[RMDB]
RNA sequence: GGGAACGACUCGAGUAGAGUCGAAAAGCCUGCAUUCGUAAGUGAUCACGGGCUGCCCGUGUCCUGGUCAUUGGUAGUGCAGGCAGAGGAAAUGCGGGAAAGGUUGCUGUGUUUGGAGGGUCCACAUGGAAAGAUUACGAUUCGUCGUAAUCUUUCCAAAAGAAACAACAACAACAAC
Reactivity to 2A3 in 0.01 (KOAc 150mM, MgCl2 10mM, bicine 150mM(pH8.5), 24C), signal-to-noise 2, nucleotides 027 to 126: g010c000c000u000g000c010a010u010u050c020g120u120a060a030g000u020g000a010u010c020a000c170g010g010g000c020u070g020c000c050c030g090u140g000u010c000c000u000g000g000u000c000a010u000u080g200g030u230a010g000u000g020c000a000g000g000c000a000g010a010g020g070a000a120a060u120g000c090g010g020g080a080a040a030g100g010u090u050g030c040u050g030u040g060u050u130u040g100g000a010g020g000g020u040c020c020a070c020a030u030
Reactivity to DMS in 0.01 (KOAc 150mM, MgCl2 10mM, bicine 150mM(pH8.5), 24C), signal-to-noise 2, nucleotides 027 to 126: g000c000c010u020g000c020a030u020u000c060g000u040a080a020g010u000g000a000u020c000a030c300g030g000g020c000u010g010c040c050c070g010u000g000u000c000c000u000g000g000u010c000a000u000u010g000g010u050a010g000u000g000c000a000g000g020c000a010g000a050g000g030a020a060a050u000g030c070g000g000g010a040a090a070g010g010u000u010g010c050u000g000u000g010u000u000u010g030g030a130g030g020g000u000c060c040a020c140a120u000
This 177-nucleotide RNA was probed chemically with 2A3 and DMS. For DMS the reverse transcriptase was MarathonRT. It was measured as part of the RMDB libraries RFM100 and RFMREP.